[RMDB]
RNA sequence: GGGAACGACUCGAGUAGAGUCGAAAAGCCGUAGGUUACGACCUACGGCAAGAAAACGCGUGCCAAAGCCGGCCAAAGAAGGCACGCGAAAGGCCGGCAAAAAGAUCGCGAGUACGCUCGCGAUCAACAUAUUAUAGCCAUUCGUGGCUAUAAUAUGAAAAGAAACAACAACAACAAC
Reactivity to DMS in 0.01 (KOAc 150mM, MgCl2 10mM, bicine 150mM(pH8.5), 24C), signal-to-noise 5, nucleotides 027 to 126: g000c010c000g030u000a000g000g000u010u010a090c200g030a060c000c010u000a000c010g000g000c000a010a020g000a100a050a100a130c090g000c000g020u000g010c000c010a100a140a150g000c000c000g020g000c020c030a080a130a130g010a100a120g000g000c000a010c000g000c000g000a010a070a070g010g020c000c010g000g000c020a080a030a050a090a070g010a020u010c000g020c000g000a020g010u010a120c260g010c000u000c010g010c000g000a000u000c000a040a130
Reactivity to 2A3 in 0.01 (KOAc 150mM, MgCl2 10mM, bicine 150mM(pH8.5), 24C), signal-to-noise 9, nucleotides 027 to 126: g000c000c000g000u010a000g020g020u040u060a080c230g060a030c070c000u000a000c000g000g000c010a010a010g010a000a090a000a010c030g000c000g010u020g010c020c050a160a070a010g000c010c000g010g000c020c030a070a180a040g130a030a080g020g000c000a000c010g010c010g010a030a000a000g010g000c000c000g010g000c020a040a090a000a000a010g000a000u000c000g000c000g000a000g000u030a020c300g010c080u000c000g000c000g000a000u000c000a000a000